[RMDB]
An RNA of 177 nucleotides, treated with DMS and 2A3 and read out base by base. The data come from the RNA Mapping Database (RMDB), library OK2TRN. Conditions: 150 mM KOAc, 10 mM MgCl2 and 150 mM bicine (pH 8.5), 24 C.

RNA sequence: GGGAACGACUCGAGUAGAGUCGAAAAUACUUUACCUGCGGCGAGUGUGCCGAGACGUUUCUCAACGCCAAUCGCACGCGCCGGAUAGAGCGUCGCCAUACGUAGCACUUCAUCCAGUGCGAUACCGCGCUAUCCCAAGAUUCGUCUUGGGAUAGCGAAAAGAAACAACAACAACAAC
Reactivity to DMS in 0.01 (KOAc 150mM, MgCl2 10mM, bicine 150mM(pH8.5), 24C), signal-to-noise 3, nucleotides 027 to 126: u010a080c070u010u000u010a080c000c060u010g010c020g000g000c000g020a070g030u000g030u000g020c130c070g020a170g010a020c020g000u000u000u000c140u010c220a060a070c060g000c000c050a130a120u000c050g000c010a010c020g000c010g010c030c020g000g000a050u000a060g000a000g020c000g020u000c060g030c040c070a060u000a090c100g000u000a120g030c010a040c020u010u010c120a110u010c100c120a050g000u000g000c010g010a080u000a090c090c110g020
Reactivity to 2A3 in 0.01 (KOAc 150mM, MgCl2 10mM, bicine 150mM(pH8.5), 24C), signal-to-noise 2, nucleotides 027 to 126: u070a020c040u060u060u090a110c020c030u070g110c010g030g000c020g040a130g130u270g020u080g060c060c010g030a030g010a010c040g040u000u110u070c220u050c100a030a050c000g010c020c050a040a070u030c030g000c040a020c000g010c020g070c010c000g000g040a050u090a050g060a010g000c050g020u010c040g040c050c030a030u070a230c050g040u030a010g020c030a020c040u090u110c050a120u030c060c080a030g000u010g000c010g040a040u020a040c060c060g030

Source information: 2A3 adducts were read by reverse transcription with SuperScript II with manganese. For 2A3, 2,478 sequencing reads were counted. For DMS the reverse transcriptase was MarathonRT.